[RMDB]
An RNA of 177 nucleotides, treated with 2A3 and DMS and read out base by base. For DMS the reverse transcriptase was MarathonRT. Reactivities are given for positions 27 through 126. For 2A3, 1,291 sequencing reads were counted. Conditions: 150 mM KOAc, 10 mM MgCl2 and 150 mM bicine (pH 8.5), 24 C.

RNA sequence: GGGAACGACUCGAGUAGAGUCGAAAACAACAGGGAGGUUGGUGCUGGACGAGCCACUCGCCAACCGGGUCAGGUCCGGAAGGAAGCAGCCCUAACGAGCCAGGCACGGGUCGCCGUGCCAGUACAAGCGUGUAUUUCUGUUCGCAGAAAUACACGCAAAAGAAACAACAACAACAAC
Reactivity to 2A3 in 0.01 (KOAc 150mM, MgCl2 10mM, bicine 150mM(pH8.5), 24C), signal-to-noise 1, nucleotides 027 to 126: c020a000a020c030a080g050g050g000a100g060g000u040u070g000g030u030g000c030u070g000g050a070c030g010a030g090c040c020a030c000u060c000g030c000c000a030a030c030c000g000g000g010u060c020a020g090g020u000c000c000g070g140a090a090g040g000a020a000g000c010a030g020c040c000c000u070a090a000c050g030a040g030c090c050a080g000g040c030a000c010g000g010g050u180c080g050c090c000g000u030g010c000c000a020g020u030a030c040a120a050
Reactivity to DMS in 0.01 (KOAc 150mM, MgCl2 10mM, bicine 150mM(pH8.5), 24C), signal-to-noise 1, nucleotides 027 to 126: c060a010a060c060a050g000g020g000a150g010g010u000u000g060g000u000g030c190u010g000g010a060c120g000a070g040c010c080a060c000u000c010g010c020c020a000a160c070c020g020g000g000u000c070a220g010g000u000c000c020g000g080a050a200g050g000a020a040g000c130a210g000c020c000c000u010a080a150c130g000a190g000c020c020a100g000g050c010a020c010g000g000g020u000c270g000c000c000g060u010g000c000c000a100g000u000a020c210a100a100